Structure probing data (2A3 and DMS) for a 207-nucleotide construct.
DMS adducts were read by reverse transcription with MarathonRT.
[RMDB]
RNA sequence: GGGAACGACUCGAGUAGAGUCGAAAAUUGGAAAGAUGAUAAAGGAAAAGUGAUAAUGAUUCAUCCAUUUUUAAAGCAGAGAAUUGAAAUGAAUUUGGCUUUUAUGGAUAAUGGUUCUGGUAUGGAUGUGGUUUAUGUUACUUGCCCUAAGGAUGAACGUACAUGAGGAUUUCGAUCCUCAUGUACGAAAAGAAACAACAACAACAAC
Reactivity to 2A3 in 0.01 (KOAc 150mM, MgCl2 10mM, bicine 150mM(pH8.5), 24C), signal-to-noise 6, nucleotides 027 to 156: u060u040g050g040a080a040a080g050a040u100g000a030u110a110a130a130g050g000a060a070a000a040g020u030g020a040u050a170a060u050g040a010u040u050c010a010u000c000c000a000u050u040u030u080u180a060a070a000g000c030a010g050a020g020a290a050u090u090g040a120a050a150u150g030a030a050u070u040u050g050g000c000u040u010u020u090a050u040g020g010a010u040a080a060u150g060g010u060u050c050u040g000g050u060a040u060g020g030a020u020g020u040g040g010u040u060u060a030u090g020u010u020a040c010u020u040g030c000c010c010u010a030a010g070g010a060u070g020a040a020
Reactivity to DMS in 0.01 (KOAc 150mM, MgCl2 10mM, bicine 150mM(pH8.5), 24C), signal-to-noise 3, nucleotides 027 to 156: u000u020g000g010a090a120a110g010a090u000g010a150u000a060a110a140g030g000a050a110a100a080g000u000g010a090u010a060a090u010g020a130u000u000c020a060u000c020c020a090u000u000u000u000u000a010a070a080g010c030a080g020a110g000a070a080u000u000g000a100a100a130u000g000a030a080u000u020u010g010g000c030u000u010u000u010a100u010g010g020a060u000a050a050u000g000g030u000u000c030u000g030g030u000a050u000g000g020a070u010g030u010g020g000u000u000u000a060u040g020u000u010a050c040u000u000g010c050c010c030u010a030a110g020g020a060u010g030a100a200
Reactivities are rounded to 0.1 and cut off at 0 and 3. The reactions ran in a buffer of 150 mM KOAc, 10 mM MgCl2 and 150 mM bicine (pH 8.5), at 24 C.